Conditions: 150 mM KOAc, 10 mM MgCl2 and 150 mM bicine (pH 8.5), 24 C.
Structure probing data (DMS and 2A3) for a 177-nucleotide construct.
The data come from the RNA Mapping Database (RMDB), library M2PK90.
2A3 adducts were read by reverse transcription with SuperScript II with manganese.
[RMDB]
RNA sequence: GGGAACGACUCGAGUAGAGUCGAAAAGAAAAUAAGCGAACAUAGCUCAGUCGGUAGAGCAGCAGGACCGAAACCUGCAUCGAAAGGGAUCAAGACCCUGUUCGCGCAAAAACCGAAGUUAAAAAAACAAUACUUUUCUGUUCGCAGAAAAGUAUUGAAAAGAAACAACAACAACAAC
Reactivity to DMS in 0.01 (KOAc 150mM, MgCl2 10mM, bicine 150mM(pH8.5), 24C), signal-to-noise 3, nucleotides 027 to 126: g020a100a050a090a040u000a160a190g000c030g000a040a010c040a120u000a130g000c020u000c040a080g010u000c040g000g020u000a070g000a130g010c000a130g020c000a010g010g010a100c100c170g010a060a080a080c010c000u000g000c010a140u000c050g000a040a100a010g000g000g000a080u010c250a070a130g010a130c000c000c000u000g030u000u020c000g000c280g020c100a070a050a040a070a030c020c010g000a040a090g000u020u020a000a000a060a050a070a010a120
Reactivity to 2A3 in 0.01 (KOAc 150mM, MgCl2 10mM, bicine 150mM(pH8.5), 24C), signal-to-noise 2, nucleotides 027 to 126: g020a000a100a050a070u250a210a000g020c000g020a040a010c010a090u140a020g000c000u000c030a020g070u040c020g030g030u040a030g010a010g030c030a000g000c000a010g030g020a150c100c100g060a070a030a040c000c000u020g000c010a020u030c000g050a040a050a020g030g000g010a040u160c110a060a020g090a190c000c010c000u020g160u010u020c000g000c000g000c020a070a090a020a000a000c000c020g020a020a020g060u140u150a000a130a000a020a000a000a020